[RMDB]
RNA sequence: GGGAACGACUCGAGUAGAGUCGAAAACAAGGAGGUUCGCCUCCUUGAAACAGUGAUUCAAGUCCUAUCUGCUGCUUCAUCGGCAAUAGGUCUUUAAUCAUUGAAAACGCUCGAGUUCGCUCGAGCGGUUACAAGCACACUUCGGUGUGCUUGUAACAAAAGAAACAACAACAACAAC
Reactivity to 2A3 in 0.01 (KOAc 150mM, MgCl2 10mM, bicine 150mM(pH8.5), 24C), signal-to-noise 3, nucleotides 027 to 126: c010a000a000g000g020a000g020g000u070u110c170g150c030c000u000c000c000u000u000g000a000a000a000c010a000g000u000g010a010u010u000c020a000a010g000u000c000c000u010a010u000c170u030g010c000u000g030c030u260u150c090a210u300c030g010g000c000a000a000u000a000g020g010u010c000u000u000u000a000a000u000c000a000u000u000g070a060a050a020a040c020g000c000u000c000g010a010g010u110u070c170g080c070u000c000g000a000g000c000g000
Reactivity to DMS in 0.01 (KOAc 150mM, MgCl2 10mM, bicine 150mM(pH8.5), 24C), signal-to-noise 3, nucleotides 027 to 126: c010a000a010g010g010a000g000g040u000u030c290g010c010c000u010c000c000u000u000g020a110a130a170c050a010g030u000g000a000u000u000c040a010a000g010u000c000c000u000a010u000c150u000g020c000u000g020c220u010u010c270a150u000c010g000g000c000a040a010u000a000g000g000u010c000u000u000u000a010a020u000c000a010u010u000g000a050a060a130a250c020g010c000u010c000g010a000g030u000u010c150g000c020u000c010g010a000g010c000g000

The data come from the RNA Mapping Database (RMDB), library RFMREP. Structure probing data (2A3 and DMS) for a 177-nucleotide construct. The RNA was probed in 150 mM KOAc, 10 mM MgCl2 and 150 mM bicine (pH 8.5) at 24 C.